[RMDB]
RNA sequence: GGGAACGACUCGAGUAGAGUCGAAAAGUGCGCGACGGCCUGGUGGUCGCCACCAAGGCGUCGAUGUACGCCGCGCUCCAGACCCUGAUCCUGCUGAUCGAUGUCAGCUACACCGCCGCCCGCGAACUAAAGUGCAGAAAUUCGUUUCUGCACUUUAAAAAGAAACAACAACAACAAC
Reactivity to 2A3 in 0.01 (KOAc 150mM, MgCl2 10mM, bicine 150mM(pH8.5), 24C), signal-to-noise 2, nucleotides 027 to 126: g000u020g000c030g000c020g040a010c010g170g180c000c020u020g000g000u030g050g050u290c090g080c240c000a010c000c010a120a040g020g020c000g020u010c030g030a110u090g010u010a020c040g040c000c020g000c030g000c030u010c010c000a060g010a160c010c010c040u000g020a060u040c010c020u030g000c010u040g000a090u010c130g080a050u220g020u040c020a010g000c000u060a040c040a020c010c040g010c000c000g020c000c020c000g050c000g010a000a000c010
Reactivity to DMS in 0.01 (KOAc 150mM, MgCl2 10mM, bicine 150mM(pH8.5), 24C), signal-to-noise 7, nucleotides 027 to 126: g020u000g000c020g030c010g010a030c010g010g010c010c010u010g020g030u000g010g010u010c130g020c040c020a020c020c020a040a070g010g010c000g010u000c030g010a050u010g030u000a070c020g010c040c020g010c070g010c030u000c030c040a110g000a100c050c020c020u000g000a080u000c040c040u000g010c030u000g010a060u010c110g010a110u000g010u010c020a050g000c040u000a080c110a090c050c030g010c030c040g000c020c020c020g010c070g000a080a120c160